[RMDB]
RNA sequence: GGGAACGACUCGAGUAGAGUCGAAAAAGGAAGUGGUCGCAUAACCACACUGAAUCGAAUCCGUAUUCUUCCGCCGUCUGCGAGACGACAACCAUUUCGCGGUAACUGCCGACCGCCAGGCCAUUAAUGGAUGAAAUAGUUUCGACUAUUUCAUCCAAAAAGAAACAACAACAACAAC
Reactivity to DMS in 0.01 (KOAc 150mM, MgCl2 10mM, bicine 150mM(pH8.5), 24C), signal-to-noise 5, nucleotides 027 to 126: a100g020g040a080a080g020u000g000g020u000c090g010c170a080u010a120a050c020c020a030c040a120c120u010g010a060a050u000c090g010a090a090u000c060c040g020u010a080u000u010c040u000u000c060c040g020c040c050g010u000c030u000g030c110g000a090g000a050c040g010a080c090a090a090c090c040a120u010u000u000c100g010c030g010g000u010a060a140c120u000g010c060c040g020a070c050c040g010c020c080a040g000g010c010c050a070u010u010a070a140
Reactivity to 2A3 in 0.01 (KOAc 150mM, MgCl2 10mM, bicine 150mM(pH8.5), 24C), signal-to-noise 2, nucleotides 027 to 126: a000g090g030a080a080g020u020g000g030u040c070g000c240a050u080a090a040c010c000a010c010a010c040u030g020a010a030u070c060g030a030a070u010c020c020g020u070a080u050u010c000u080u020c010c020g060c020c010g040u030c010u040g070c030g080a070g010a060c010g050a050c040a040a030c020c010a050u050u060u100c030g010c000g030g010u000a030a040c040u040g000c000c020g030a040c020c000g000c010c010a000g060g000c010c000a020u120u270a090a030
Source information:
This 177-nucleotide RNA was probed chemically with DMS and 2A3. The 2A3 profile rests on 2,962 reads. 2A3 adducts were read by reverse transcription with SuperScript II with manganese. The RNA was probed in 150 mM KOAc, 10 mM MgCl2 and 150 mM bicine (pH 8.5) at 24 C.